[RMDB]
RNA sequence: GGGAACGACUCGAGUAGAGUCGAAAAGCGUACUACAUUCUUUUGACGAACGACGGUGUUGAGUGGGUCCCAAAUAGGACCCACAAUGAUGCACCCAAGUUCGAUAAGAAUGUAUCGCAAACUUCAUUUCGCAUACUUCGGUAUGCGAAAUGAAGAAGAAAAUAUAGAUGUUCGCAUCUAUAUUUUCAAAAGAAACAACAACAACAAC
Reactivity to 2A3 in 0.01 (KOAc 150mM, MgCl2 10mM, bicine 150mM(pH8.5), 24C), signal-to-noise 4, nucleotides 027 to 156: g010c020g040u100a100c030u010a000c020a000u010u010c010u020u120u120u160g290a120c040g000a000a000c000g040a010c030g020g000u000g000u020u020g020a010g000u010g000g010g010u020c010c010c030a110a190a040u280a050g000g000a000c010c010c010a010c000a000a020u040g000a000u060g000c000a000c000c000c010a030a050g000u000u000c000g010a000u010a000a000g000a000a000u030g000u020a020u300c010g000c010a020a050a060c000u000u010c000a000u000u000u000c000g000c000a000u000a000c000u020u050c270g120g000u000a000u000g000c000g000a000a000a000u010g000a000a000g000a000a000
Reactivity to DMS in 0.01 (KOAc 150mM, MgCl2 10mM, bicine 150mM(pH8.5), 24C), signal-to-noise 2, nucleotides 027 to 156: g010c010g020u010a050c080u000a040c010a020u000u010c020u010u010u000u000g010a290c170g010a020a020c010g000a300c300g000g010u000g020u000u000g010a020g000u000g020g010g010u020c000c010c010a000a110a290u000a060g000g000a030c020c000c000a000c000a000a030u000g000a100u010g020c010a020c010c000c010a040a300g010u010u000c010g000a130u000a010a030g000a050a010u000g000u000a020u010c020g010c010a070a040a140c000u000u020c000a010u000u000u000c000g000c000a020u000a000c000u000u020c300g070g040u010a010u000g010c030g000a000a000a000u000g010a000a010g010a080a140
An RNA of 207 nucleotides, treated with 2A3 and DMS and read out base by base. For DMS the reverse transcriptase was MarathonRT. DMS (dimethyl sulfate) methylates the pairing face of unpaired adenines and cytosines.